[RMDB]
RNA sequence: GGGAACGACUCGAGUAGAGUCGAAAAGUUACACGCUUCGGCGUGUAACAAAUAGUCAAACGGUCGCGGAAACGAGAGGACACUCUAGGAGGCAUCCAUGCAAAACCCAUUGCUUCGGCAAUGGGAACAAAGCGAUUUGGUUCGCCAAAUCGCUUUGAAAAGAAACAACAACAACAAC
Reactivity to DMS in 0.01 (KOAc 150mM, MgCl2 10mM, bicine 150mM(pH8.5), 24C), signal-to-noise 1, nucleotides 027 to 126: g000u000u000a000c000a000c030g030c000u020u020c250g000g000c060g020u000g030u020a000a000c000a040a110a040u000a060g010u000c060a020a080a120c080g020g000u000c010g030c060g010g010a080a120a060c120g010a040g000a090g000g030a090c080a070c040u040c080u010a140g000g000a090g030g000c020a070u000c020c070a060u000g010c130a100a020a060a110c010c000c000a000u000u000g000c000u000u000c210g020g010c000a000a010u000g000g020g000a010a000
Background:
Chemical mapping of a 177-nucleotide RNA with DMS. For DMS, 762 sequencing reads were counted. Conditions: 150 mM KOAc, 10 mM MgCl2 and 150 mM bicine (pH 8.5), 24 C.